[RMDB]
RNA sequence: GGGAACGACUCGAGUAGAGUCGAAAACAGAGCAUAUCGACUGCAGAAUGACAAGUGGGUGUAUAAUUCUGACAAACUGCCCAAAGCAGCGGGAGCCACCCUAAAAGGAAAACUACACGUCCCGUUCCCACUUAGAAGACUUCGGUCUUCUAAGUGGAAAAGAAACAACAACAACAAC
Reactivity to 2A3 in 0.01 (KOAc 150mM, MgCl2 10mM, bicine 150mM(pH8.5), 24C), signal-to-noise 2, nucleotides 027 to 126: c010a000g120a000g090c060a060u100a030u160c030g080a080c050u040g020c020a030g060a240a100u090g010a080c040a120a080g090u070g030g040g030u020g050u010a010u030a140a150u050u060c020u010g020a070c050a040a130a030c040u100g020c000c000c060a020a020a020g020c040a010g010c020g000g020g000a020g050c010c020a020c020c030c010u080a130a130a010a010g050g030a080a110a000a000c010u030a030c050a020c040g040u030c000c000c010g010u030u060c010
Reactivity to DMS in 0.01 (KOAc 150mM, MgCl2 10mM, bicine 150mM(pH8.5), 24C), signal-to-noise 2, nucleotides 027 to 126: c070a110g000a090g000c050a070u010a100u000c090g000a130c070u010g010c040a060g010a040a060u010g030a100c110a060a110g040u000g000g000g010u000g000u010a020u000a090a060u010u000c020u000g000a160c110a020a060a150c040u000g010c000c030c150a060a090a230g010c040a040g030c040g020g020g010a140g000c080c050a030c020c000c000u000a030a090a130a110g000g000a030a080a030a100c090u000a060c020a060c090g000u000c010c030c000g020u000u000c020
Source: RMDB library OK2TST, as collected in RNAgym.
Chemical mapping of a 177-nucleotide RNA with 2A3 and DMS.
Reactivities are rounded to 0.1 and cut off at 0 and 3.
Values cover nucleotides 27 to 126.
For 2A3, 1,746 sequencing reads were counted.
The DMS profile rests on 1,252 reads.